[RMDB]
RNA sequence: GGGAACGACUCGAGUAGAGUCGAAAAAUGCAGGGCCCAGAAGCUUUCUUGCAGCGCCGGCGCCUUAGCAGGGCGCCAGGCUAAUGAGGGUCACUCAAAGAGGCUGAUCAAAUAUUCAAAUUUCCCGCUAGGAGGUGAAUUUCGAUUCACCUCCUAGAAAAGAAACAACAACAACAAC
Reactivity to DMS in 0.01 (KOAc 150mM, MgCl2 10mM, bicine 150mM(pH8.5), 24C), signal-to-noise 3, nucleotides 027 to 126: a050u010g020c050a080g000g000g020c070c030c040a120g020a100a140g000c010u010u040u020c020u010u000g040c110a090g000c180g030c000c000g000g000c020g020c000c000u010u030a110g000c260a200g000g000g000c010g000c000c010a010g030g010c010u020a090a120u020g000a070g010g010g030u010c050a080c050u020c060a090a090a110g000a060g000g000c060u010g000a070u010c050a050a070a080u030a060u050u040c100a030a110a140u030u000u010c000c000c000g010
Reactivity to 2A3 in 0.01 (KOAc 150mM, MgCl2 10mM, bicine 150mM(pH8.5), 24C), signal-to-noise 4, nucleotides 027 to 126: a020u140g040c030a030g000g000g030c020c030c030a040g140a090a000g010c020u170u180u090c040u110u160g030c060a040g040c020g010c030c020g010g000c000g000c000c000u010u040a030g020c090a030g030g000g000c000g000c000c000a020g000g010c020u020a050a040u090g030a060g020g000g020u040c020a040c030u060c030a050a070a050g080a050g020g030c050u040g030a090u040c040a030a090a080u190a110u220u090c080a050a060a020u020u010u010c010c000c000g000

Chemical mapping of a 177-nucleotide RNA with DMS and 2A3.
The 2A3 profile rests on 2,365 reads.
The reactions ran in a buffer of 150 mM KOAc, 10 mM MgCl2 and 150 mM bicine (pH 8.5), at 24 C.
Source: RMDB library RFM100, as collected in RNAgym.
The DMS profile rests on 4,740 reads.